[RMDB]
RNA sequence: GGGAACGACUCGAGUAGAGUCGAAAAAGCAGGAGUACGCUCCUGCAUGGGUAGACGAAUUGACCCCAACUGAAGUUCAAUUCUAACGUUAAAAGGAGUUUUAUAUGACUGGACGUACGUGUCCAGAUGACGAUUUCAUUCUUCGGAAUGAAAUCAAGACAUAUGUCCACUUCGGUGGACAUAUGUCAAAAGAAACAACAACAACAAC
Reactivity to 2A3 in 0.01 (KOAc 150mM, MgCl2 10mM, bicine 150mM(pH8.5), 24C), signal-to-noise 2, nucleotides 027 to 156: a000g000c000a000g000g000a000g000u080a010c190g050c030u010c010c000u000g000c000a000u000g000g000g000u230a100g020a250c120g030a010a010u000u000g000a000c000c000c010c020a120a030c140u250g040a010a010g030u090u020c000a000a000u000u000c020u090a150a070c050g060u110u170a040a130a000a000g120g020a140g050u000u030u180u010a240u090a110u150g160a070c030u030g000g030a000c030g040u300a020c110g050u080g000u160c000c000a010g000a010u060g050a030c070g010a000u000u000u010c000a000u010u000c000u020u050c110g050g000a020a020u050g010a000a000a000u000c000a000a010